[RMDB]
RNA sequence: GGGAACGACUCGAGUAGAGUCGAAAAGCAGCUUGCAGAUUAUCAUCCACUCUCUCCGUUUCCCUUCCCACAGCUAUCAUCCGGACUAGCAUUUCCUGUACAUACUAGGGAAGGGAAAUGGAGAGAGGCAUAAAAGGCGGUUCGCCGCCUUUUAUGCAAAAGAAACAACAACAACAAC
Reactivity to 2A3 in 0.01 (KOAc 150mM, MgCl2 10mM, bicine 150mM(pH8.5), 24C), signal-to-noise 3, nucleotides 027 to 126: g030c020a010g060c080u120u130g020c050a050g010a210u090u070a060u280c040a040u030c040c000a040c020u010c000u000c000u000c010c000g020u010u010u000c010c000c010u010u000c010c010c000a080c070a070g040c070u020a000u060c010a020u020c010c030g010g010a040c050u070a050g050c040a100u050u070u000c000c010u020g000u020a020c010a130u040a010c030u050a050g000g010g000a000a000g000g010g000a000a000a010u010g010g000a000g000a000g010a000g010
Reactivity to DMS in 0.01 (KOAc 150mM, MgCl2 10mM, bicine 150mM(pH8.5), 24C), signal-to-noise 3, nucleotides 027 to 126: g040c010a140g010c170u000u010g010c050a090g000a160u010u000a120u010c170a130u010c040c040a300c010u000c000u000c000u000c000c000g020u000u000u000c000c000c000u000u000c000c000c000a130c240a040g010c210u000a020u000c070a200u010c050c080g000g020a040c220u000a130g010c140a120u010u000u000c010c000u000g010u000a170c220a040u010a020c030u000a160g000g000g010a010a010g000g000g010a000a000a000u000g000g000a020g000a010g010a000g010
Structure probing data (2A3 and DMS) for a 177-nucleotide construct. The DMS profile rests on 1,974 reads. For 2A3, 4,075 sequencing reads were counted. Source: RMDB library RFMREP, as collected in RNAgym. Conditions: 150 mM KOAc, 10 mM MgCl2 and 150 mM bicine (pH 8.5), 24 C.